[RMDB]
Chemical mapping of a 207-nucleotide RNA with 2A3. The RNA was probed in 150 mM KOAc, 10 mM MgCl2 and 150 mM bicine (pH 8.5) at 24 C.
RNA sequence: GGGAACGACUCGAGUAGAGUCGAAAAACACCAAAACUGAAAACGUAAGGCAAUCCUUCCACGACGAUACUUACUUUCCUUUGAUCGUCGUUACUACUGGCAUAGCCACAAAGGAGAACAAACAUGAGCGCGGACACUGACUUCGGUCAGUGUCCAACCCAACAACAUCGUUCGCGAUGUUGUUGGGAAAAGAAACAACAACAACAAC
Reactivity to 2A3 in 0.01 (KOAc 150mM, MgCl2 10mM, bicine 150mM(pH8.5), 24C), signal-to-noise 3, nucleotides 027 to 156: a000c020a020c020c030a030a070a040a080c120u140g020a020a030a030a080c070g040u050a050a050g040g000c070a040a120u040c030c050u110u020c080c030a020c000g000a000c000g020a020u120a150c030u160u010a020c010u140u260u050c020c040u070u040u070g010a010u010c000g000u000c000g000u010u040a040c010u010a030c010u000g010g010c050a170u120a130g000c010c040a020c050a010a000a020g050g010a050g010a100a010c060a100a090a000c010a040u200g060a010g080c150g030c130g030g000a000c000a000c010u000g010a000c000u020u100c140g000g000u000c000a000g000u010g000u000c000c000a000a000